RNA sequence: GGGAACGACUCGAGUAGAGUCGAAAAAAUAAGAUGAAUAAUUAAUUACUUUCAUUGUAAAUUUGUUAUCUUCGUAUAGUACUAAAAGUAUGAGUUAUUAAGCCAUCCCAACUUAAUAACCAUGUAACCUACUAUUAUUGUUCGCAAUAAUAGUAGGAAAAGAAACAACAACAACAAC
Reactivity to DMS in 0.01 (KOAc 150mM, MgCl2 10mM, bicine 150mM(pH8.5), 24C), signal-to-noise 1, nucleotides 027 to 126: a120a050u000a030a100g020a030u000g000a240a040u010a010a000u000u000a050a050u000u010a050c010u000u030u020c060a040u010u010g000u000a030a020a090u000u000u000g030u000u000a040u000c050u020u000c030g010u010a070u000a140g000u000a090c090u000a030a090a050a160g000u010a030u000g000a070g020u000u000a020u000u000a000a010g020c020c020a110u010c010c000c010a080a260c000u000u000a000a010u000a000a010c000c060a040u000g000u010a060a160
Reactivity to 2A3 in 0.01 (KOAc 150mM, MgCl2 10mM, bicine 150mM(pH8.5), 24C), signal-to-noise 1, nucleotides 027 to 126: a000a000u170a040a000g000a020u040g010a180a080u030a030a020u100u070a000a060u090u000a010c020u220u300u190c030a150u080u100g030u020a010a190a230u050u040u020g000u000u000a050u020c040u030u030c050g050u110a080u030a250g040u030a060c050u090a100a060a100a040g020u050a040u030g100a110g060u000u010a000u010u020a000a000g040c000c000a030u000c020c000c000a020a000c000u000u000a000a000u020a020a010c030c000a000u040g110u110a030a020